[RMDB]
Chemical mapping of a 177-nucleotide RNA with DMS.

RNA sequence: GGGAACGACUCGAGUAGAGUCGAAAAGUACCACGCGAUAGACUAGAGGAUACUUGCGUUUCACGAGCCUAGCAAUGCCCCUUAGAUAGUCAACGUACUCGUGAGGUGGUUGACGGCCAAAGCUGAAACGCAGAUCAUCCUUCGGGAUGAUCUGCGUAAAAGAAACAACAACAACAAC
Reactivity to DMS in 0.01 (KOAc 150mM, MgCl2 10mM, bicine 150mM(pH8.5), 24C), signal-to-noise 1, nucleotides 027 to 126: g000u030a170c000c000a090c030g010c020g000a120u000a010g010a060c110u000a120g010a110g000g000a050u000a020c030u000u000g010c030g020u010u000u000c010a030c070g030a200g010c060c050u010a100g000c070a070a070u010g000c010c000c000c030u000u000a110g020a140u010a030g010u000c030a150a130c170g020u000a010c070u000c040g010u000g040a020g000g000u000g030g000u000u000g010a110c110g000g010c030c040a050a110a090g000c150u000g000a010a010